[RMDB]
RNA sequence: GGGAACGACUCGAGUAGAGUCGAAAACACUUCUCUAUGUGCCCAUCCGGCUGGCUGGACACACUAGACACCUCCCAGGUCCUCGUGUGUACCUGGUUGAGAGGCUCAUUGCUUGUGAAAAUCCAUUUACCGAUCGUGUUCGCACGAUCGAAAAGAAACAACAACAACAAC
Reactivity to DMS in 0.01 (KOAc 150mM, MgCl2 10mM, bicine 150mM(pH8.5), 24C), signal-to-noise 8, nucleotides 027 to 129: c080a050c130u000u000c070u030c010u040a000u030g030u030g010c070c020c030a110u010c070c030g100g000c160u100g000g000c160u020g020g000a080c050a030c020a030c160u030a020g010a030c180a080c110c000u030c040c020c010a110g030g030u000c030c040u020c230g050u060g030u110g040u060a020c020c010u010g000g000u030u020g040a140g010a080g000g000c030u040c070a140u030u040g020c100u040u050g030u000g030a070a060a130a190u000c040c040a110u090u020u050a130c160
Reactivity to 2A3 in 0.01 (KOAc 150mM, MgCl2 10mM, bicine 150mM(pH8.5), 24C), signal-to-noise 8, nucleotides 027 to 129: c060a000c020u150u070c030u000c010u060a030u050g020u020g020c000c010c010a010u030c030c030g220g000c190u200g020g000c010u010g030g000a000c010a000c000a000c040u020a010g020a040c020a050c020c010u030c000c010c010a020g010g000u050c010c020u120c060g120u110g030u050g000u140a060c000c000u020g000g000u070u110g060a060g000a020g030g000c020u050c050a120u090u210g040c080u060u080g000u010g050a080a020a010a020u020c030c000a060u080u070u110a110c040
Annotation
Structure probing data (DMS and 2A3) for a 170-nucleotide construct.